[RMDB]
RNA sequence: GGGAACGACUCGAGUAGAGUCGAAAAUCUCUCCGGAGGGAGAGAAAGUACCAUGAUAGCUGGGGGAAUCGGCGAGGCCCGGAAGGGAGCAGCCGUGCCUGGACGCCAGCGUUCGCUGGUCAACAGCUGUAUGGGUACAGUUCGCUGUACCCAUACAAAAAGAAACAACAACAACAAC
Reactivity to 2A3 in 0.01 (KOAc 150mM, MgCl2 10mM, bicine 150mM(pH8.5), 24C), signal-to-noise 5, nucleotides 027 to 126: u010c000u000c000u010c000c010g150g160a230g110g090g000a000g020a010g020a020a010a010g030u030a040c000c030a060u100g080a120u130a020g000c000u000g030g010g010g000g040a100a200u080c000g000g010c000g010a030g010g080c010c000c010g030g080a050a070g030g000g000a020g030c020a010g000c000c020g000u000g010c000c000u030g040g040a030c080g020c010c010a000g010c010g000u110u160c120g000c020u010g000g010u090c060a080a060c000a090g020c010
Reactivity to DMS in 0.01 (KOAc 150mM, MgCl2 10mM, bicine 150mM(pH8.5), 24C), signal-to-noise 5, nucleotides 027 to 126: u000c000u000c000u000c020c000g020g090a180g000g000g000a010g000a010g010a010a030a070g000u010a130c000c000a110u040g020a110u040a090g010c000u000g010g010g000g000g020a090a110u030c010g000g020c010g000a300g000g000c000c000c000g000g120a170a150g000g000g000a010g000c000a300g000c000c010g010u000g000c180c010u000g000g000a210c300g000c010c010a000g000c000g010u010u040c140g000c000u000g000g000u010c100a110a150c020a020g000c030
Structure probing data (2A3 and DMS) for a 177-nucleotide construct.